Conditions: 150 mM KOAc, 10 mM MgCl2 and 150 mM bicine (pH 8.5), 24 C. Structure probing data (DMS and 2A3) for a 177-nucleotide construct.
RNA sequence: GGGAACGACUCGAGUAGAGUCGAAAAGAUAUGGACGUUAAGAGCAACAGCUCCUGCAUCGGAAACGAUGUGGAGACAUGCUCCAUACGUCCUAAGUCAAACCAACUCUUCUUCGGAAGAGUUGGAACAUAUUUGAGCAGUUCGCUGCUCAAAUAUGAAAAGAAACAACAACAACAAC
Reactivity to DMS in 0.01 (KOAc 150mM, MgCl2 10mM, bicine 150mM(pH8.5), 24C), signal-to-noise 6, nucleotides 027 to 126: g000a020u000a070u000g000g000a010c000g010u000u000a170a230g010a010g030c000a140a080c200a120g000c010u000c000c000u020g070c000a000u000c000g020g010a020a010a030c010g010a010u000g010u000g000g000a020g000a020c050a280u010g010c000u000c000c020a150u010a000c000g010u000c000c000u000a010a050g000u010c010a140a160a240c000c000a000a010c000u000c000u000u000c000u000u020c260g020g020a020a010g000a010g000u000u000g000g000a030a120
Reactivity to 2A3 in 0.01 (KOAc 150mM, MgCl2 10mM, bicine 150mM(pH8.5), 24C), signal-to-noise 6, nucleotides 027 to 126: g010a010u020a010u060g000g000a000c000g000u010u020a160a160g020a010g030c150a130a150c100a280g000c010u010c000c010u090g020c010a000u000c000g000g000a010a010a010c010g000a000u000g020u030g020g010a000g000a010c030a170u300g000c010u000c000c010a030u070a060c000g010u000c000c000u000a000a000g000u000c010a050a080a160c000c000a010a010c000u000c000u020u010c000u040u120c300g170g000a000a000g000a000g000u000u000g000g000a020a010